Source: RMDB library OK2TST, as collected in RNAgym. The record gives the reactivity of an RNA of 177 nucleotides to DMS and 2A3. Values cover nucleotides 27 to 126.
RNA sequence: GGGAACGACUCGAGUAGAGUCGAAAAGACAGCUCAGGGGCCACUUCCCCCAUCAACCCUGCCGUGGCCCUAGAAUAGUGGAGUCCAGGACAGGAGAUGCUGUGCCCCUGGCCUUGGGAUCCAGGCCAAAGUUCAGUGAUUUCGAUCACUGAACUUUAAAAGAAACAACAACAACAAC
Reactivity to DMS in 0.01 (KOAc 150mM, MgCl2 10mM, bicine 150mM(pH8.5), 24C), signal-to-noise 4, nucleotides 027 to 126: g000a120c130a040g010c060u010c090a150g020g010g010g000c030c030a050c110u010u010c020c000c000c240c030a060u000c110a080a140c160c010c010u000g000c050c060g010u000g000g010c010c000c010u000a020g010a090a120u010a110g020u000g010g010a060g010u000c010c000a020g010g000a020c000a020g000g010a070g000a060u010g020c120u010g010u010g010c010c030c000c020u000g010g010c040c010u000u010g030g010g010a090u000c020c030a050g020g030c100c100
Reactivity to 2A3 in 0.01 (KOAc 150mM, MgCl2 10mM, bicine 150mM(pH8.5), 24C), signal-to-noise 1, nucleotides 027 to 126: g030a030c030a020g020c020u030c110a030g010g000g030g040c020c010a050c020u100u040c020c010c000c000c000a040u070c010a040a160c010c000c040u010g010c000c020g060u020g010g000c020c020c020u020a050g070a210a120u110a050g200u070g020g030a000g010u020c000c000a010g050g060a070c000a010g020g030a040g040a030u100g030c090u110g060u120g080c000c000c000c020u010g000g000c010c000u030u030g030g060g010a060u080c010c000a010g030g000c000c030